[RMDB]
RNA sequence: GGGAACGACUCGAGUAGAGUCGAAAAGACGUAAUCCGCGCAAAUCCACAAACGCCAACGAUGAGCGUUUCGCUGUAGCCGCUUAAGGCAACAGCCGGGGCCGCCUGAGCCCUGAUACCAAAGACGGGAAACUCGAUGCCAUUCGUGGCAUCGAGAAAUCAAGUAAUGCUUUCGAGCAUUACUUGAUAAAAGAAACAACAACAACAAC
Reactivity to DMS in 0.01 (KOAc 150mM, MgCl2 10mM, bicine 150mM(pH8.5), 24C), signal-to-noise 2, nucleotides 027 to 156: g000a080c020g020u020a050a130u000c040c000g010c030g030c030a060a100a100u010c030c030a070c050a020a220a000c010g030c010c030a040a150c110g010a140u000g000a100g000c030g000u000u000u000c060g040c000u000g020u000a100g000c010c000g020c300u000u000a090a180g000g010c020a100a020c010a040g020c040c010g000g000g060g040c020c000g010c050c040u040g010a210g010c000c010c010u000g000a130u010a050c080c020a030a090a110g030a090c040g010g000g000a150a080a150c010u010c000g020a040u000g000c010c000a080u000u020c240g060u000g040g000c000a010u000c000g010a010g010a000a030
Reactivity to 2A3 in 0.01 (KOAc 150mM, MgCl2 10mM, bicine 150mM(pH8.5), 24C), signal-to-noise 5, nucleotides 027 to 156: g050a000c010g030u040a040a080u050c070c050g020c000g010c060a100a070a120u090c070c030a090c070a110a040a020c050g000c020c030a110a090c150g160a210u140g030a060g050c000g000u010u050u070c020g000c000u000g010u030a050g010c000c010g070c170u270u260a120a080g000g000c010a020a010c000a010g000c000c000g000g000g000g000c000c040g040c010c020u030g000a010g010c000c000c000u010g020a040u060a080c010c020a030a020a000g100a040c030g010g000g020a070a040a030c000u000c000g000a000u000g000c000c000a030u050u070c200g070u060g000g000c000a000u000c000g000a000g000a000a000